[RMDB]
Chemical mapping of a 177-nucleotide RNA with DMS and 2A3.
Reactivities are given for positions 27 through 126.
For DMS, 7,884 sequencing reads were counted.
The RNA was probed in 150 mM KOAc, 10 mM MgCl2 and 150 mM bicine (pH 8.5) at 24 C.
For 2A3 the reverse transcriptase was SuperScript II with manganese.
Source: RMDB library OK2TST, as collected in RNAgym.

RNA sequence: GGGAACGACUCGAGUAGAGUCGAAAAGUGGACGCGUCCUGAAAAUAAAGCAGAACGGGUUUCUUAUCCCGCAAUGACCUUUAGUUCGGCUCGAAAUUGUUUGCAAGCAAUCUACUGGAAGCCCUCGAUUCAAACCUAGAUUCGUCUAGGUUUGAAUAAAAGAAACAACAACAACAAC
Reactivity to DMS in 0.01 (KOAc 150mM, MgCl2 10mM, bicine 150mM(pH8.5), 24C), signal-to-noise 6, nucleotides 027 to 126: g030u010g000g000a050c050g010c040g020u010c030c010u010g000a060a050a110a140u010a070a090a140g010c010a010g000a090a050c010g010g010g020u010u000u010c090u010u010a110u010c020c000c000g010c170a060a090u010g000a150c070c020u010u000u000a060g010u000u000c080g020g000c020u000c040g010a070a120a080u000u000g000u000u000u000g010c100a060a100g000c050a060a050u000c030u000a040c030u000g000g000a110a160g000c010c010c010u000c070g010
Reactivity to 2A3 in 0.01 (KOAc 150mM, MgCl2 10mM, bicine 150mM(pH8.5), 24C), signal-to-noise 2, nucleotides 027 to 126: g070u060g020g000a010c010g000c020g150u000c000c000u020g020a060a050a020a130u160a070a040a010g000c010a000g010a050a010c010g090g000g090u030u120u000c030u080u110a120u080c010c000c010g000c060a030a080u080g050a070c000c000u090u110u080a010g000u010u090c050g020g020c000u000c030g020a080a050a070u100u060g080u100u100u210g060c030a030a040g000c000a000a060u020c040u080a040c010u030g020g050a050a050g000c000c010c010u060c040g030